This 177-nucleotide RNA was probed chemically with DMS and 2A3. The reactions ran in a buffer of 150 mM KOAc, 10 mM MgCl2 and 150 mM bicine (pH 8.5), at 24 C. 2A3 is a SHAPE reagent: it acylates the 2'-hydroxyl of flexible nucleotides of all four kinds. DMS adducts were read by reverse transcription with MarathonRT. It was measured as part of the RMDB library TTRDEL.

[RMDB]
RNA sequence: GGGAACGACUCGAGUAGAGUCGAAAAGAUAUGGACGGUCACCCCUUGCUCGACGAAGAACUCGGAAACGAGGGAGUCGAGACCCAAGAACUGACCGUCCUAAGUCAAACCUCCCUUCGGGGAGGAACAAAUGAAUAUACUUCGGUAUAUUCAUUUGAAAAGAAACAACAACAACAAC
Reactivity to DMS in 0.01 (KOAc 150mM, MgCl2 10mM, bicine 150mM(pH8.5), 24C), signal-to-noise 9, nucleotides 027 to 126: g010a050u000a300u000g000g000a010c000g010g010u000c000a070c120c100c080c040u000u010g000c010u000c000g010a010c000g010a110a140g010a110a190c000u000c000g000g000a110a090a190c010g010a020g000g000g000a070g010u000c000g000a010g000a100c190c240c060a030a030g010a080a070c270u000g000a010c000c000g010u000c000c000u000a000a070g000u000c050a060a090a160c010c000u000c000c000c000u000u010c160g020g000g010g010a010g010g010a030a060
Reactivity to 2A3 in 0.01 (KOAc 150mM, MgCl2 10mM, bicine 150mM(pH8.5), 24C), signal-to-noise 4, nucleotides 027 to 126: g020a020u090a050u190g000g010a010c000g000g010u000c000a020c020c050c010c000u010u040g020c010u010c000g010a010c000g170a300a120g020a070a020c010u000c000g020g020a060a040a040c010g000a010g020g010g010a010g000u000c000g010a000g000a000c050c050c020a030a010g010a050a030c080u020g000a000c000c010g010u000c000c000u000a020a000g000u000c010a030a050a120c000c000u000c000c010c000u010u070c280g090g000g000g000a000g000g000a000a010